[RMDB]
RNA sequence: GGGAACGACUCGAGUAGAGUCGAAAAUGCAGAGCCAGCAGGAGUGGUCUUCCUGGGCCACUGUGCUGCACCUUCUGCGGUCUCCCGUGGAGUGACAGGAAGACCCACGGGUCAGGAAACAAGCUAGAAAGCCGCGGGGCCGCCCUGCAGGGUGUAACUAUAAUAGCGGAUUCGUCCGCUAUUAUAGAAAAGAAACAACAACAACAAC
Reactivity to DMS in 0.01 (KOAc 150mM, MgCl2 10mM, bicine 150mM(pH8.5), 24C), signal-to-noise 1, nucleotides 027 to 156: u000g020c010a040g020a150g040c070c030a040g040c030a060g040g000a110g020u010g020g060u000c010u030u010c170c080u010g050g010g000c040c020a020c020u010g030u000g010c020u000g050c020a060c020c030u020u000c030u010g050c040g010g030u000c030u000c010c010c010g040u000g000g010a200g000u000g010a280c010a130g000g030a250a280g010a060c000c010c000a040c070g040g010g020u010c060a100g000g010a190a090a190c030a110a180g010c060u010a180g000a110a200a160g030c030c000g050c040g040g000g010g020c040c010g000c020c030c040u000g000c030a080g030g000g010u010g000u000a090a220
Reactivity to 2A3 in 0.01 (KOAc 150mM, MgCl2 10mM, bicine 150mM(pH8.5), 24C), signal-to-noise 1, nucleotides 027 to 156: u090g000c000a010g060a010g160c060c040a020g010c020a000g000g190a040g020u010g030g050u010c020u180u130c040c080u030g020g000g030c010c030a020c050u110g030u140g000c000u040g020c020a060c000c000u170u080c030u030g000c030g010g040u040c090u080c000c010c000g020u000g000g020a270g020u130g040a070c090a110g050g040a070a070g040a070c020c000c000a030c020g020g010g000u030c040a060g000g090a070a120a130c070a100a000g040c010u140a060g140a130a150a010g050c020c020g010c010g000g000g020g000c020c010g010c020c010c010u020g010c000a010g000g050g020u080g000u020a050a020

Chemical mapping of a 207-nucleotide RNA with DMS and 2A3. Source: RMDB library OK3TST, as collected in RNAgym. Values cover nucleotides 27 to 156. The DMS profile rests on 2,348 reads. DMS adducts were read by reverse transcription with MarathonRT. High 2A3 reactivity points to a flexible backbone, as in loops and unpaired stretches.